[RMDB]
RNA sequence: GGGAACGACUCGAGUAGAGUCGAAAAGAAAGAAAAUGCGGUACUCUGUUCUUGGCAGAUCCAUUUUAGGUACCUCAUCAUUUGACGGUACCCGUAAUGCUUCUGCUGAGAGCCGACCGUGAGCCAAUACUGGGGGAACUUUCGAGUUCCCCCAGUAAAAAGAAACAACAACAACAAC
Reactivity to DMS in 0.01 (KOAc 150mM, MgCl2 10mM, bicine 150mM(pH8.5), 24C), signal-to-noise 1, nucleotides 027 to 126: g000a070a020a050g010a080a030a090a060u000g040c000g000g040u010a070c200u020c090u000g000u000u000c010u000u000g000g000c000a000g010a020u010c300c000a000u000u010u020u010a080g000g080u000a000c000c000u030c030a000u020c190a270u070u050u030g010a000c200g030g000u000a000c000c000c000g060u010a000a010u020g030c130u010u000c010u010g000c000u000g020a030g000a000g030c040c230g000a000c000c020g000u000g000a080g010c090c020a100a090
Reactivity to 2A3 in 0.01 (KOAc 150mM, MgCl2 10mM, bicine 150mM(pH8.5), 24C), signal-to-noise 1, nucleotides 027 to 126: g040a000a110a010g120a030a110a020a060u240g030c000g010g000u140a190c050u050c070u110g000u010u000c000u000u010g000g000c000a000g000a000u060c000c000a000u090u000u000u110a010g000g000u000a000c000c030u000c000a030u000c020a120u080u180u160g040a120c220g000g000u000a000c000c010c000g000u080a000a000u010g000c030u000u000c000u000g000c040u000g000a000g000a000g020c000c000g020a030c000c000g050u000g000a020g110c010c000a030a130

The data come from the RNA Mapping Database (RMDB), library RFM100. Structure probing data (DMS and 2A3) for a 177-nucleotide construct. The RNA was probed in 150 mM KOAc, 10 mM MgCl2 and 150 mM bicine (pH 8.5) at 24 C.